[RMDB]
RNA sequence: GGGAACGACUCGAGUAGAGUCGAAAAGCCGCGAUAUUAAUCGUAGCUAUACGCGAUGCUACGUACGAUGCCGCGGCCGAUAUUAUACGUACGAUAUCGCGAUGCAUCGUAGCGCAUUAUAGCGCGCUGCCAAGGAAGCCUUCGGGCUUCCUUGGCAAAAAGAAACAACAACAACAAC
Reactivity to 2A3 in 0.01 (KOAc 150mM, MgCl2 10mM, bicine 150mM(pH8.5), 24C), signal-to-noise 1, nucleotides 027 to 126: g030c010c010g000c010g040a030u020a010u170u300a150a100u090c030g010u000a020g040c010u070a040u030a280c150g010c000g010a020u110g020c000u000a000c010g020u000a060c000g030a020u000g020c000c010g070c030g040g060c000c010g010a000u000a010u000u070a170u050a210c240g140u030a020c170g000a010u000a000u040c010g010c040g020a050u110g000c010a040u040c010g000u010a070g040c010g000c020a040u140u100a100u190a080g070c030g010c060g000c060
Reactivity to DMS in 0.01 (KOAc 150mM, MgCl2 10mM, bicine 150mM(pH8.5), 24C), signal-to-noise 1, nucleotides 027 to 126: g030c010c000g000c040g010a120u000a060u020u000a170a040u040c020g000u000a020g010c000u010a190u020a050c160g000c110g000a070u010g000c000u000a000c000g000u000a030c070g000a000u000g000c000c110g040c010g000g040c080c030g000a020u000a000u010u000a090u000a120c300g010u000a080c150g010a060u000a000u000c000g020c070g010a130u010g010c000a010u000c000g000u000a030g000c000g010c040a130u010u000a100u030a140g010c070g020c020g010c090